[RMDB]
RNA sequence: GGGAACGACUCGAGUAGAGUCGAAAAUUUGCCAGCCUGGCAAAGCUGUGCCUUCUCUAAUGGGAACCAAAUCCUGCCCCUUAGACAAGAUGGCCCUUGGCUGGGCCUCACAGGGAACAAGGUUGGAGCAUUCCAGGAGGUCUUUGUGCAGGGUUGAUCACUACGUAUUAUUCGUAAUACGUAGUGAAAAAGAAACAACAACAACAAC
Reactivity to DMS in 0.01 (KOAc 150mM, MgCl2 10mM, bicine 150mM(pH8.5), 24C), signal-to-noise 2, nucleotides 027 to 156: u010u010u000g000c030c020a130g030c030c050u000g040g060c030a020a060a100g040c300u000g000u010g000c020c020u000u000c030u010c010u000a040a040u000g000g010g000a140a280c030c020a060a040a090u000c030c010u000g010c010c000c000c040u000u000a080g000a200c080a140a100g030a100u000g020g000c000c010c000u000u000g030g030c080u020g020g030g030c000c000u000c050a060c120a060g000g000g020a060a040c010a050a010g010g040u000u000g000g010a120g030c090a100u010u000c010c030a090g010g010a090g030g020u000c020u000u000u000g010u000g000c000a030g010g010g020u010u000g010a140
Reactivity to 2A3 in 0.01 (KOAc 150mM, MgCl2 10mM, bicine 150mM(pH8.5), 24C), signal-to-noise 1, nucleotides 027 to 156: u080u040u100g120c020c010a020g030c060c020u030g030g000c010a000a030a010g020c080u160g080u150g130c010c010u050u000c020u020c010u030a090a090u120g010g000g070a060a060c040c030a040a040a110u110c010c000u010g010c010c000c000c010u040u090a050g010a140c050a050a100g030a110u160g010g000c000c010c010u120u090g120g010c290u060g030g040g010c000c000u040c010a030c020a020g050g000g020a080a040c090a150a000g020g010u010u000g030g010a040g070c030a070u060u020c000c010a020g000g020a020g020g000u050c000u010u020u010g010u040g130c020a000g000g050g000u060u100g040a050